[RMDB]
RNA sequence: GGGAACGACUCGAGUAGAGUCGAAAAUAUACACUUUUCAAGGUUUAUGACUUGAGAAAUGUUCUCAUUUUUAUCAUACUGGAGGUGUAUUGAAAAGUUAAGGAGUGGAAAGUAUGAAUAAAGAGCACAUAACCCUUCAGUUCGCUGAAGGGUUAUGAAAAGAAACAACAACAACAAC
Reactivity to DMS in 0.01 (KOAc 150mM, MgCl2 10mM, bicine 150mM(pH8.5), 24C), signal-to-noise 3, nucleotides 027 to 126: u000a080u000a060c010a020c020u000u010u000u010c020a050a050g010g010u000u000u010a060u020g000a070c030u000u000g000a020g010a020a080a080u010g010u010u000c020u030c030a120u000u010u000u010u010a050u020c030a000u010a030c020u000g000g010a130g000g010u000g020u000a050u000u010g000a080a050a060a110g010u010u010a080a100g010g000a090g040u010g000g000a130a070a050g000u000a040u010g000a050a070u000a020a030a040g010a060g030c250a130
Reactivity to 2A3 in 0.01 (KOAc 150mM, MgCl2 10mM, bicine 150mM(pH8.5), 24C), signal-to-noise 1, nucleotides 027 to 126: u110a000u050a030c060a000c020u080u030u030u070c010a040a080g040g070u020u220u170a090u160g140a100c000u020u090g020a000g020a060a080a050u220g070u100u020c010u000c000a020u040u100u010u000u040a050u050c000a010u000a060c000u000g030g020a030g000g060u020g010u030a020u010u020g000a020a070a020a020g020u150u140a090a030g040g080a040g020u100g050g070a140a010a000g070u070a050u070g010a060a000u150a030a080a030g110a010g060c050a010